Chemical mapping of a 177-nucleotide RNA with 2A3. The data come from the RNA Mapping Database (RMDB), library RFM100.
RNA sequence: GGGAACGACUCGAGUAGAGUCGAAAAGAAAGGCUCCCGUGUGUCGCCUCGCAGUGUGGGUGCGGCCUCGUACCGGGCAGCGUGACCCUGACCUACAGCAAACGCCCCAGAGCCCAAGGGCCUCCCGAGUUUACGUUGGCUUCGGCCAACGUAAACUAAAAGAAACAACAACAACAAC
Reactivity to 2A3 in 0.01 (KOAc 150mM, MgCl2 10mM, bicine 150mM(pH8.5), 24C), signal-to-noise 1, nucleotides 027 to 126: g090a010a100a010g030g000c000u090c070c010c020g050u090g070u110g000u050c000g010c000c060u070c070g020c020a080g070u020g000u050g290g110g000u070g000c000g020g000c120c020u060c070g000u030a060c080c030g020g000g000c020a000g060c000g000u020g080a170c010c000c000u110g100a160c070c070u100a110c010a020g000c000a050a080a090c080g020c010c010c000c000a070g020a010g070c060c000c000a080a160g000g000g000c000c000u020c040c000c000g130